[RMDB]
Description:
The record gives the reactivity of an RNA of 207 nucleotides to 2A3. 2A3 adducts were read by reverse transcription with SuperScript II with manganese.
RNA sequence: GGGAACGACUCGAGUAGAGUCGAAAAACACGUAGGGCGAGGGGUGGGCGAAAGUUGACAUGAGACCGUAACUUUCGUAGUCAUUGAUAAAGGGGCAGGUCUCGCUCUUUUGUCAUUGCGGUUGCCUAAAACUGUGGUUCGUUCGCGAACCACAGAACUCACAUAUCAACUUCGGUUGAUAUGUGAGAAAAGAAACAACAACAACAAC
Reactivity to 2A3 in 0.01 (KOAc 150mM, MgCl2 10mM, bicine 150mM(pH8.5), 24C), signal-to-noise 2, nucleotides 027 to 156: a020c090a000c040g070u060a070g010g020g020c140g080a120g040g040g010g040u250g040g000g000c020g010a010a010a000g040u040u080g050a020c050a080u140g020a070g040a060c040c030g010u030a020a030c010u060u050u020c030g010u010a060g060u070c040a060u010u140g020a000u060a030a010a020g000g000g000g000c020a020g000g130u050c020u020c030g000c010u000c000u010u050u080u020g020u010c010a010u000u060g040c060g010g020u030u060g030c020c020u090a060a060a060a080c010u010g000u000g000g000u010u000c010g010u010u030c130g000c000g110a000a010c000c000a000c000a000g000a000a000